[RMDB]
RNA sequence: GGGAACGACUCGAGUAGAGUCGAAAAUAGCAGUCUUUCGAGACUGCUACAUUAAUAGUCGCUAGAAAACGAUGAAAACUAGCGACUAACAUAACGAUCGAAAAGACGCACCCUUCGGGGUGCGUAACUCUACCGUAACUUUCGAGUUACGGUAGAGAAAAGAAACAACAACAACAAC
Reactivity to 2A3 in 0.01 (KOAc 150mM, MgCl2 10mM, bicine 150mM(pH8.5), 24C), signal-to-noise 2, nucleotides 027 to 126: u060a000g000c000a000g010u020c000u040u100u150c200g080a000g020a000c010u000g000c010u000a000c010a000u030u080a020a020u010a010g000u010c000g020c000u020a000g060a110a180a050a040c130g220a300u210g070a070a070a030a100c030u000a000g020c020g000a000c000u000a010a000c000a020u140a070a050c050g080a070u170c080g040a030a050a010a130g090a020c010g000c000a010c040c000c000u000u080c240g040g010g010g000u010g080c000g010u000a000a000
Reactivity to DMS in 0.01 (KOAc 150mM, MgCl2 10mM, bicine 150mM(pH8.5), 24C), signal-to-noise 2, nucleotides 027 to 126: u010a010g000c000a000g010u000c010u000u000u000c180g010a030g020a010c000u000g000c000u000a010c100a040u000u010a100a160u000a020g000u000c000g000c020u000a010g000a060a070a090a100c120g010a230u030g020a100a090a070a100c000u010a000g010c000g000a010c000u020a000a080c210a110u020a050a070c250g030a120u010c120g020a130a060a070a090g000a030c010g010c000a010c000c020c000u000u020c180g020g000g010g010u000g010c000g000u010a020a040
Overview:
Structure probing data (2A3 and DMS) for a 177-nucleotide construct. It was measured as part of the RMDB library M2PK50. Values cover nucleotides 27 to 126.